[RMDB]
RNA sequence: GGGAACGACUCGAGUAGAGUCGAAAAUCUCGUUCAAUGCUGGGUCUUACCACUCAGACUGUUGAUUCCUCACAGGGUUCAGAAUACCAGUACGUUAUCUUCUGUCAAACAGCAGAUACGGCACAUGACAGGGUAUUGUUCGCAAUACCCAAAAGAAACAACAACAACAAC
Reactivity to DMS in 0.01 (KOAc 150mM, MgCl2 10mM, bicine 150mM(pH8.5), 24C), signal-to-noise 8, nucleotides 027 to 129: u020c000u000c050g010u030u010c050a100a060u020g000c030u020g000g000g000u020c060u020u040a150c190c280a030c000u010c000a000g010a080c060u050g000u010u010g020a060u000u000c020c010u030c060a010c090a040g000g000g050u010u000c080a020g000a130a050u030a070c070c050a070g020u000a060c050g000u010u000a010u000c020u000u000c010u000g010u020c190a110a110a300c000a060g000c050a000g020a040u010a010c040g020g000c120a050c110a070u000g020a080c140a070
Reactivity to 2A3 in 0.01 (KOAc 150mM, MgCl2 10mM, bicine 150mM(pH8.5), 24C), signal-to-noise 9, nucleotides 027 to 129: u010c010u000c010g080u150u060c060a060a020u080g020c000u010g000g000g000u030c040u050u100a060c030c030a030c030u040c000a040g030a160c030u060g040u070u030g020a090u080u080c020c010u060c020a080c050a080g070g000g000u080u090c030a030g050a130a050u060a140c020c010a020g040u050a050c040g060u110u100a010u020c000u030u000c000u020g060u080c060a120a130a160c000a120g010c000a000g000a000u010a010c000g000g020c060a050c020a150u170g080a060c060a080
Chemical mapping of a 170-nucleotide RNA with DMS and 2A3. For DMS, 52,820 sequencing reads were counted. The RNA was probed in 150 mM KOAc, 10 mM MgCl2 and 150 mM bicine (pH 8.5) at 24 C. Values cover nucleotides 27 to 129.